[RMDB]
RNA sequence: GGGAACGACUCGAGUAGAGUCGAAAAAUUGAACCAAGCAAUGGUGUUGACAUCAUAGAUGCGAAAGGUCACUUUGUGUCACCUGGAUUUGUCGAUGUUCAUGUUCAUUUACGUGAACCUGGUGGUGGUCUUGCUUGCUUUUCGAAGCAAGCAAGACAAAAGAAACAACAACAACAAC
Reactivity to 2A3 in 0.01 (KOAc 150mM, MgCl2 10mM, bicine 150mM(pH8.5), 24C), signal-to-noise 1, nucleotides 027 to 126: a050u170u160g030a000a010c020c010a010a010g010c010a000a120u070g010g030u120g020u180u250g020a060c000a020u040c000a010u050a120g130a120u080g020c020g170a130a090a020g070g020u010c000a030c130u060u040u210g090u070g020u080c000a000c010c000u020g170g100a120u000u040u080g130u040c020g010a040u030g000u050u000c020a030u030g020u030u040c130a220u030u220u150a040c020g000u010g050a010a010c020c020u040g000g000u000g020g070u040g020
Reactivity to DMS in 0.01 (KOAc 150mM, MgCl2 10mM, bicine 150mM(pH8.5), 24C), signal-to-noise 3, nucleotides 027 to 126: a050u000u000g000a090a120c020c030a110a150g010c100a110a070u000g010g000u000g030u000u000g010a060c020a040u010c030a040u000a090g000a090u000g010c040g000a070a100a070g010g000u000c110a040c020u010u010u000g030u000g020u000c030a030c010c000u000g010g010a180u000u010u010g030u010c040g010a100u000g000u010u000c010a020u000g000u010u020c270a130u010u010u000a050c130g020u000g010a020a030c010c160u000g000g000u010g010g020u000g000

An RNA of 177 nucleotides, treated with 2A3 and DMS and read out base by base. Conditions: 150 mM KOAc, 10 mM MgCl2 and 150 mM bicine (pH 8.5), 24 C. Source: RMDB library OK2TRN, as collected in RNAgym. 2A3 adducts were read by reverse transcription with SuperScript II with manganese.